[RMDB]
RNA sequence: GGGAACGACUCGAGUAGAGUCGAAAAAUACACCAGCAGUAGGACUCAGCGACCGUCACAACAAGGUUGUGCUGGUAUCCGACGGUCGUAUAGCCCUGUCUUACAGGUUGCCUUGCACUGACGUGCCACACCAUUUACAGAUUCGUCUGUAAAUGAAGCAAAGAGCACUAUUCGUAGUGCUCUUUGCAAAAGAAACAACAACAACAAC
Reactivity to DMS in 0.01 (KOAc 150mM, MgCl2 10mM, bicine 150mM(pH8.5), 24C), signal-to-noise 1, nucleotides 027 to 156: a170u030a110c060a300c030c020a090g050c060a040g080u000a000g000g020a030c020u010c030a140g050c050g020a000c030c000g010u000c010a200c050a070a030c140a040a120g060g020u020u000g010u000g080c000u000g000g040u000a070u000c030c020g050a070c040g010g060u020c010g060u020a060u000a130g000c000c040c000u030g010u000c080u020u000a120c120a080g000g000u000u000g000c020c100u000u000g000c000a140c010u030g020a090c110g040u000g010c000c060a050c050a100c100c010a070u000u000u000a000c000a020g010a060u000u040c300g050u000c000u000g000u000a010a000a010u020g000a060a110
Reactivity to 2A3 in 0.01 (KOAc 150mM, MgCl2 10mM, bicine 150mM(pH8.5), 24C), signal-to-noise 3, nucleotides 027 to 156: a000u180a010c050a000c010c000a000g000c010a010g020u140a010g010g000a020c010u020c060a010g000c010g000a000c020c000g010u020c010a050c050a230a220c110a280a120g040g000u020u010g020u030g030c000u010g000g000u020a020u020c010c000g010a000c000g000g000u000c010g020u060a060u040a100g090c010c000c000u010g020u040c040u020u140a050c060a010g120g000u040u070g000c030c020u070u100g010c050a040c040u140g140a090c140g010u010g010c040c000a060c010a010c040c000a000u000u000u000a000c000a000g010a030u010u160c190g110u000c080u000g000u000a010a000a000u010g030a040a010